[RMDB]
RNA sequence: GGGAACGACUCGAGUAGAGUCGAAAAGAUAUGGAUCUAAGGUACCGUGACGAGACAGGCAACAGCUACCGAUCGGAAACGAUCGUGUAGACAUGCCUGUUCGUCACGGUACCUUAGAUCCUAAGUCCAUUAUCAUACUCUUCGGAGUAUGAUAAUGAAAAGAAACAACAACAACAAC
Reactivity to DMS in 0.01 (KOAc 150mM, MgCl2 10mM, bicine 150mM(pH8.5), 24C), signal-to-noise 2, nucleotides 027 to 126: g000a120u000a300u010g000g010a010u010c010u000a000a000g000g000u000a010c000c020g020u000g000a010c000g010a120g010a030c000a000g020g020c000a030a080c300a210g000c010u000a010c000c000g000a020u000c010g020g040a200a110a230c020g000a020u000c010g000u010g010u010a000g000a050c120a210u000g000c000c020u000g000u000u000c000g000u000c000a000c010g020g000u010a000c000c010u000u000a010g000a000u010c000c000u000a010a050g000u000c020